Chemical mapping of a 177-nucleotide RNA with 2A3 and DMS. The data come from the RNA Mapping Database (RMDB), library OK1LIB. The reactions ran in a buffer of 150 mM KOAc, 10 mM MgCl2 and 150 mM bicine (pH 8.5), at 24 C. The 2A3 profile rests on 87,217 reads.

RNA sequence: GGGAACGACUCGAGUAGAGUCGAAAAUCAAUAGUAGAGUCUAUACAAUGGUCGUAUUCUACUAGGAGUAUGAAGAAGUACGUAUAGAUCAUACUCAUUAGUCAGUAAUCGUACUUCGCUGACUGAAGAUAGUAUGGUCAUUCGUGGCUAUACUAUCAAAAGAAACAACAACAACAAC
Reactivity to 2A3 in 0.01 (KOAc 150mM, MgCl2 10mM, bicine 150mM(pH8.5), 24C), signal-to-noise 9, nucleotides 027 to 126: u080c020a010a100u020a020g010u010a000g000a010g040u000c030u070a080u040a110c100a110a220u200g160g030u080c050g040u070a070u020u000c000u010a070c010u020a040g030g060a020g010u040a030u060g040a040a080g040a050a010g020u030a010c030g030u050a070u100a140g060a030u070c010a010u020a020c000u020c040a110u050u060a010g010u010c020a000g020u030a030a040u070c030g010u010a020c020u020u050c040g000c010u020g010a020c010u020g020a060a010
Reactivity to DMS in 0.01 (KOAc 150mM, MgCl2 10mM, bicine 150mM(pH8.5), 24C), signal-to-noise 9, nucleotides 027 to 126: u020c080a080a090u010a020g010u000a010g000a090g010u010c060u020a060u020a050c110a150a120u040g010g020u010c060g010u020a030u010u000c000u000a030c060u010a030g000g000a040g010u000a020u000g010a080a100g010a050a040g010u000a010c030g000u010a300u020a060g010a080u010c030a040u000a010c010u000c060a100u020u010a020g000u000c070a040g000u010a080a080u010c060g000u010a020c050u000u010c060g000c060u010g000a060c030u000g010a100a120